[RMDB]
RNA sequence: GGGAACGACUCGAGUAGAGUCGAAAACGGCACUGCUUCGGCAGUGCCGAAAUCUUGGCCAAAUGUAUAGCAUAAAGCAGCCGGAAGUGCAGUUAGAAUAAGAAAGUAACACCUUCGGGUGUUACAAGACUCAUAUACUGUUCGCAGUAUAUGAGUCAAAAGAAACAACAACAACAAC
Reactivity to DMS in 0.01 (KOAc 150mM, MgCl2 10mM, bicine 150mM(pH8.5), 24C), signal-to-noise 4, nucleotides 027 to 126: c020g020g000c010a020c010u000g000c020u000u020c200g020g030c000a000g010u010g010c000c000g010a000a030a040u010c050u000u000g030g010c040c050a050a070a080u000g000u000a050u010a080g010c030a060u010a080a120a120g020c040a060g000c040c070g000g000a050a090g010u000g010c030a050g010u010u000a060g000a110a060u010a080a090g020a110a090a120g010u000a000a000c000a010c000c000u000u010c180g040g000g020u000g000u000u000a000c000a040a080
Reactivity to 2A3 in 0.01 (KOAc 150mM, MgCl2 10mM, bicine 150mM(pH8.5), 24C), signal-to-noise 3, nucleotides 027 to 126: c000g000g020c000a020c010u020g040c000u060u080c110g120g050c000a000g050u020g030c020c010g000a000a000a000u000c010u060u050g060g000c020c020a020a090a080u040g040u070a190u170a150g060c030a040u090a080a230a020g000c050a020g020c020c030g060g050a110a010g040u040g060c070a020g020u100u200a050g100a140a090u150a200a040g110a150a100a000g010u000a000a010c010a000c010c000u020u080c190g080g010g010u000g010u000u010a000c000a000a000
Record summary: Chemical mapping of a 177-nucleotide RNA with DMS and 2A3. Conditions: 150 mM KOAc, 10 mM MgCl2 and 150 mM bicine (pH 8.5), 24 C. For 2A3, 2,321 sequencing reads were counted.